[RMDB]
RNA sequence: GGGAACGACUCGAGUAGAGUCGAAAAGAUAUGGACACUUUGUCAGCGAUCAAUAAGAGCAACAGCAGAGCUCGGAAACGAGCUCUGACAUGCUCUGAACUUCGCUUGGAUUUAAGUGUCCUAAGUCAAAAUCUUGCUCUGUUCGCAGAGCAAGAAAUCCUCAAGAGAUGUUCGCAUCUCUUGAGGAAAAAGAAACAACAACAACAAC
Reactivity to DMS in 0.01 (KOAc 150mM, MgCl2 10mM, bicine 150mM(pH8.5), 24C), signal-to-noise 1, nucleotides 027 to 156: g000a110u010a270u000g010g030a020c000a020c010u000u000u000g000u010c000a140g010c010g020a020u000c040a040a190u000a300a050g000a070g030c000a050a110c120a140g010c000a020g000a030g010c010u000c000g050g010a100a090a300c010g020a020g000c000u000c010u000g000a000c030a300u000g020c000u000c010u010g000a120a200c040u000u020c000g020c030u010u020g030g020a020u000u020u000a010a050g050u020g000u000c000c000u020a010a040g000u010c010a040a050a080a200u000c010u000u000g010c020u010c000u000g000u000u000c300g000c030a040g020a030g000c000a000a020g000a050a050a100
Reactivity to 2A3 in 0.01 (KOAc 150mM, MgCl2 10mM, bicine 150mM(pH8.5), 24C), signal-to-noise 2, nucleotides 027 to 156: g010a020u080a030u160g000g010a000c010a000c000u000u010u000g000u030c000a000g000c000g010a000u040c020a080a200u030a040a010g000a000g000c000a010a140c030a150g040c000a010g010a010g010c000u000c020g010g010a010a040a020c000g000a000g000c010u010c000u010g010a010c010a020u040g000c060u010c000u000g010a010a010c010u000u000c000g050c030u050u110g090g020a040u290u220u190a000a000g000u000g000u000c000c000u000a020a000g000u000c020a010a000a010a300u020c000u000u000g000c010u000c000u010g040u030u000c060g030c070a000g000a000g000c000a000a000g010a000a000a020

About this RNA: This 207-nucleotide RNA was probed chemically with DMS and 2A3. It was measured as part of the RMDB library RNAMAK. DMS adducts were read by reverse transcription with MarathonRT. The RNA was probed in 150 mM KOAc, 10 mM MgCl2 and 150 mM bicine (pH 8.5) at 24 C. For 2A3 the reverse transcriptase was SuperScript II with manganese. For DMS, 2,676 sequencing reads were counted.